[RMDB]
RNA sequence: GGGAACGACUCGAGUAGAGUCGAAAAACGUUGAUAUGGAUUUACUCCGAGGAGACGGACUACCACGAACAGGGGAAACUCUACCCGUGGCGUCUCCGUUUGACGAGUAAGUCCUAAGUCAACAUGCAACCACUUGGGUUCGCCCAAGUGAAAAGAAACAACAACAACAAC
Reactivity to DMS in 0.01 (KOAc 150mM, MgCl2 10mM, bicine 150mM(pH8.5), 24C), signal-to-noise 8, nucleotides 027 to 129: a050c170g020u020u030g000a000u020a040u060g050g020a010u010u000u010a020c020u020c020c030g030a020g030g000a030g000a030c010g040g000a010c080u080a270c070c010a040c030g020a030a200c130a140g010g000g010g010a010a000a000c000u000c010u020a120c220c170c010g020u000g040g030c020g030u020c010u000c000c010g010u020u020u030g020a120c300g030a020g020u000a000a000g000u030c000c000u000a010a040g000u010c030a030a000c030a050u070g030c100a050a040c080
Reactivity to 2A3 in 0.01 (KOAc 150mM, MgCl2 10mM, bicine 150mM(pH8.5), 24C), signal-to-noise 4, nucleotides 027 to 129: a010c090g000u000u000g000a000u000a000u040g000g000a000u000u000u000a000c000u000c010c010g020a050g000g000a010g010a000c010g010g000a030c130u260a110c070c000a000c000g010a040a020c030a080g000g000g000g000a000a000a000c000u010c000u010a030c010c010c000g000u000g010g010c000g000u000c000u000c000c000g010u090u040u070g000a000c010g000a000g000u000a000a000g000u000c000c000u000a000a000g000u000c000a000a000c000a010u100g030c000a040a080c020
Annotation:
This 170-nucleotide RNA was probed chemically with DMS and 2A3. Source: RMDB library 15KLIB, as collected in RNAgym. Values are in units of 0.01, from 0 to 300, in steps of 10. Values cover nucleotides 27 to 129. The DMS profile rests on 47,574 reads.